[RMDB]
RNA sequence: GGGAACGACUCGAGUAGAGUCGAAAAGAUAUGGACGUUUGUAUCUUCGAGCGUCAUCGGAAACGAUACGCGAUGAGAAGAAUAACGUCCUAAGUCAAAGGCUUCAUUCGUUCGCGAAUGAAGCCAACGCAUAGAUAGUGUUCGCACUAUCUAUGCGAAAAGAAACAACAACAACAAC
Reactivity to 2A3 in 0.01 (KOAc 150mM, MgCl2 10mM, bicine 150mM(pH8.5), 24C), signal-to-noise 5, nucleotides 027 to 126: g020a020u060a050u140g000g010a010c020g020u040u110u200g200u140a300u090c010u040u030c040g040a030g000c020g030u090c210a020u020c000g000g010a070a030a020c010g000a010u010a010c020g030c060g200a300u230g150a140g020a040a010g030a040a030u060a020a000c000g000u000c010c010u010a060a010g030u020c030a120a070a040g010g000c000u000u000c010a000u000u000c000g050u020u110c300g000c020g150a000a000u010g000a000a000g000c000c000a000a000
Reactivity to DMS in 0.01 (KOAc 150mM, MgCl2 10mM, bicine 150mM(pH8.5), 24C), signal-to-noise 5, nucleotides 027 to 126: g000a030u000a300u010g010g010a020c000g000u000u000u010g030u010a110u000c000u000u000c000g010a140g010c000g000u000c260a000u000c000g000g000a120a050a170c010g010a020u000a000c010g010c000g000a150u010g010a260g000a010a010g000a040a080u010a020a010c000g020u000c000c000u000a010a080g010u000c010a100a110a140g010g010c000u000u000c000a000u000u000c000g010u000u010c270g020c020g000a010a000u000g000a010a000g010c000c010a000a020